[RMDB]
This 177-nucleotide RNA was probed chemically with 2A3 and DMS. The 2A3 profile rests on 994 reads. 2A3 adducts were read by reverse transcription with SuperScript II with manganese. Conditions: 150 mM KOAc, 10 mM MgCl2 and 150 mM bicine (pH 8.5), 24 C. For DMS, 1,562 sequencing reads were counted. Reactivities are given for positions 27 through 126.
RNA sequence: GGGAACGACUCGAGUAGAGUCGAAAAUGCAAUUGCGCACAGCUCUAAAAUUGUGAAUACUUUCAUCUUGGCAGUUUGUCCUGAGCUUUAGCUGCUACCUUCUUACACCUAAUAAGUUUGAGAUCCAUGACGGAACUAUUUUCGAAUAGUUCCGUCAAAAAGAAACAACAACAACAAC
Reactivity to 2A3 in 0.01 (KOAc 150mM, MgCl2 10mM, bicine 150mM(pH8.5), 24C), signal-to-noise 2, nucleotides 027 to 126: u080g000c000a030a180u130u120g040c010g030c020a010c020a030g000c000u040c020u120a100a120a100a040u090u050g000u030g070a040a030u160a150c070u130u120u170c060a060u090c060u050u010g090g000c000a020g010u060u120u050g070u080c060c020u040g040a020g040c000u040u060u120a020g010c010u020g030c000u030a080c020c000u000u000c000u000u010a030c020a000c010c000u070a100a030u130a230a040g030u010u070u030g030a030g020a010u090c070c070a070
Reactivity to DMS in 0.01 (KOAc 150mM, MgCl2 10mM, bicine 150mM(pH8.5), 24C), signal-to-noise 2, nucleotides 027 to 126: u020g010c070a110a080u010u010g030c070g010c100a070c100a080g030c020u000c060u010a060a060a040a110u000u000g020u030g000a100a110u010a130c120u010u010u000c050a070u000c090u000u010g000g010c050a030g010u000u000u000g020u010c080c100u000g010a040g000c030u000u000u000a070g010c010u000g000c020u000a070c050c050u000u000c000u010u000a040c060a040c030c030u000a100a080u000a070a090g000u010u000u010g000a020g000a020u000c070c060a140